Chemical mapping of a 177-nucleotide RNA with 2A3 and DMS. The reactions ran in a buffer of 150 mM KOAc, 10 mM MgCl2 and 150 mM bicine (pH 8.5), at 24 C. Values cover nucleotides 27 to 126. 2A3 adducts were read by reverse transcription with SuperScript II with manganese. Source: RMDB library RFMREP, as collected in RNAgym.
RNA sequence: GGGAACGACUCGAGUAGAGUCGAAAAGUUUAAGCCACCUAUAGUUUCUACUGCAAAACGUAUAAUUUAGUUCCCACAUAUACUAAAAAACGUGUCCUUAACUCUCUCUGUCAGAUUAGUUGUAGGUCACUGCUUAAUUGUUCGCAAUUAAGCAGUGAAAAGAAACAACAACAACAAC
Reactivity to 2A3 in 0.01 (KOAc 150mM, MgCl2 10mM, bicine 150mM(pH8.5), 24C), signal-to-noise 1, nucleotides 027 to 126: g010u030u050u080a070a030g080c050c020a030c010c000u010a030u030a160g000u070u000u000c020u050a100c000u000g020c040a030a030a100a090c040g060u070a090u050a220a100u050u080u180a030g040u040u000c050c000c010a000c020a010u260a000u050a050c040u050a060a020a090a010a000a020c050g040u040g040u080c000c000u000u010a050a000c010u000c010u000c010u010c020u010g100u070c010a010g010a170u030u100a050g030u000u040g030u000a020g020g050u030
Reactivity to DMS in 0.01 (KOAc 150mM, MgCl2 10mM, bicine 150mM(pH8.5), 24C), signal-to-noise 1, nucleotides 027 to 126: g000u000u000u000a150a070g000c110c060a040c040c010u000a060u000a140g000u000u000u000c020u000a100c020u000g040c120a110a090a050a030c130g010u010a050u010a040a160u010u010u000a150g000u000u010c000c030c010a100c220a130u010a070u000a060c060u030a000a090a110a050a090a030c110g000u000g000u000c030c010u020u000a090a040c020u000c180u010c010u010c060u000g000u000c040a040g030a100u000u000a090g020u000u000g060u020a050g000g000u030